[RMDB]
RNA sequence: GGGAACGACUCGAGUAGAGUCGAAAACAACGAUGGCGCUGCGCUCAUUCUGACCCCGAUAGUGAUUGCCAUGUUGCUCGCACUGGGCUUCAGUAAAGGGACUACGCUUGCCUUUGUGAUGGCCGCCCUAAAUCAGCUUCUUCGGAAGCUGAUUUAGAAAAGAAACAACAACAACAAC
Reactivity to DMS in 0.01 (KOAc 150mM, MgCl2 10mM, bicine 150mM(pH8.5), 24C), signal-to-noise 4, nucleotides 027 to 126: c060a080a080c130g010a100u000g010g010c030g040c070u000g010c090g000c050u000c060a090u000u010c050u000g010a130c300c010c020c050g010a070u000a040g020u010g010a090u010u000g000c040c030a080u000g000u010u000g010c010u000c080g010c070a090c090u010g020g000g000c050u000u010c020a060g010u010a010a070a110g000g000g010a090c040u010a070c100g010c070u000u020g010c030c010u000u000u010g000u000g000a110u000g020g000c010c060g000c050c050
Reactivity to 2A3 in 0.01 (KOAc 150mM, MgCl2 10mM, bicine 150mM(pH8.5), 24C), signal-to-noise 2, nucleotides 027 to 126: c020a000a010c020g090a050u080g010g020c010g000c070u040g020c030g000c070u050c050a080u160u020c020u040g090a070c010c000c000c000g060a080u050a090g080u050g040a120u020u170g030c000c070a070u150g050u080u110g110c020u020c040g060c010a080c090u060g000g010g030c000u060u070c020a030g030u110a030a030a060g050g000g030a030c020u080a040c160g020c020u070u110g050c010c000u040u080u060g060u050g060a080u080g050g000c000c020g050c020c020
Chemical mapping of a 177-nucleotide RNA with DMS and 2A3. The data come from the RNA Mapping Database (RMDB), library OK2TST. The RNA was probed in 150 mM KOAc, 10 mM MgCl2 and 150 mM bicine (pH 8.5) at 24 C. For DMS the reverse transcriptase was MarathonRT. The DMS profile rests on 4,168 reads.